[RMDB]
RNA sequence: GGGAACGACUCGAGUAGAGUCGAAAAGCAGGGUCUUUGACGGUGAAGAGAGGACAGGGGAGAUGAUAGUGGUGCAGAGGUGUGGAGGUAGGUCUGUGCUUGGCCUAGAAGACCCAAAUUGAGGAGACUGAUGCUGAUUAUUCGUAAUCAGCAUCAGAAAAGAAACAACAACAACAAC
Reactivity to 2A3 in 0.01 (KOAc 150mM, MgCl2 10mM, bicine 150mM(pH8.5), 24C), signal-to-noise 2, nucleotides 027 to 126: g120c100a040g000g000g000u020c070u050u030u070g040a040c080g080g000u060g080a070a010g060a020g020a060g110g010a020c020a020g060g020g030g000a090g010a080u090g030a040u130a060g100u090g130g010u130g050c090a050g020a060g070g090u150g020u140g090g090a060g000g000u060a030g020g000u010c040u090g040u000g050c000u050u030g070g000c000c010u000a020g010a020a010g040a010c000c020c020a030a020a010u070u060g060a020g130g030a050g020a030
Reactivity to DMS in 0.01 (KOAc 150mM, MgCl2 10mM, bicine 150mM(pH8.5), 24C), signal-to-noise 2, nucleotides 027 to 126: g010c190a120g020g010g020u000c010u010u010u000g000a170c230g000g010u000g010a080a040g000a120g010a210g000g010a050c030a090g000g000g000g010a160g000a110u000g000a080u000a100g000u010g010g000u010g020c140a100g010a090g010g000u020g020u000g000g010a070g020g000u020a070g010g000u010c020u000g010u000g010c060u000u010g010g000c010c010u000a300g000a020a040g000a040c000c000c030a030a030a140u000u000g020a140g000g000a140g010a240